Chemical mapping of a 207-nucleotide RNA with 2A3 and DMS. The RNA was probed in 150 mM KOAc, 10 mM MgCl2 and 150 mM bicine (pH 8.5) at 24 C. The DMS profile rests on 11,420 reads. 2A3 adducts were read by reverse transcription with SuperScript II with manganese. For 2A3, 19,804 sequencing reads were counted.
RNA sequence: GGGAACGACUCGAGUAGAGUCGAAAAACGUAGUCGGUGAGCUUGAGUACUAGGAACACGAGGAAGAGCGCGAAUGCUAUUGGCACGUUUCUACUUUCUUGUGGUGGGUGUCAAGUCACAGACCAAAGUCAUUGAUCUGCAUGGUUUCUCCGACGAACCACAUAAUUGAUUUCGAUCAAUUAUGUGGAAAAGAAACAACAACAACAAC
Reactivity to 2A3 in 0.01 (KOAc 150mM, MgCl2 10mM, bicine 150mM(pH8.5), 24C), signal-to-noise 9, nucleotides 027 to 156: a000c040g020u030a020g010u010c010g000g000u020g020a020g020c010u000u010g000a020g070u120a030c020u040a050g140g100a120a020c000a000c010g010a010g010g010a010a010g010a010g010c030g000c020g070a150a110u060g010c010u090a160u300u260g090g000c010a010c010g020u020u130u050c040u120a300c000u000u010u020c000u010u020g000u020g030g040u090g100g000g000u050g020u020c010a010a000g010u030c020a020c020a090g020a000c010c000a050a090a040g070u110c040a140u050u200g050a090u080c030u070g030c070a080u080g010g020u030u050u020c040u010c010c010g010a020c010g010a030a020
Reactivity to DMS in 0.01 (KOAc 150mM, MgCl2 10mM, bicine 150mM(pH8.5), 24C), signal-to-noise 3, nucleotides 027 to 156: a060c060g020u000a100g010u010c010g050g040u010g010a160g020c020u000u000g000a100g020u000a050c030u000a120g000g010a090a080c020a040c050g010a050g020g010a040a070g000a290g030c300g010c030g000a060a080u010g020c000u020a240u000u010g010g020c030a100c020g000u000u000u000c010u000a060c030u000u010u000c030u000u000g000u000g000g020u000g010g000g010u000g010u000c020a030a070g020u010c070a030c020a010g000a020c010c010a020a060a190g010u010c130a150u000u000g010a040u000c020u000g000c030a160u000g030g000u000u000u000c020u000c020c030g020a120c050g010a090a250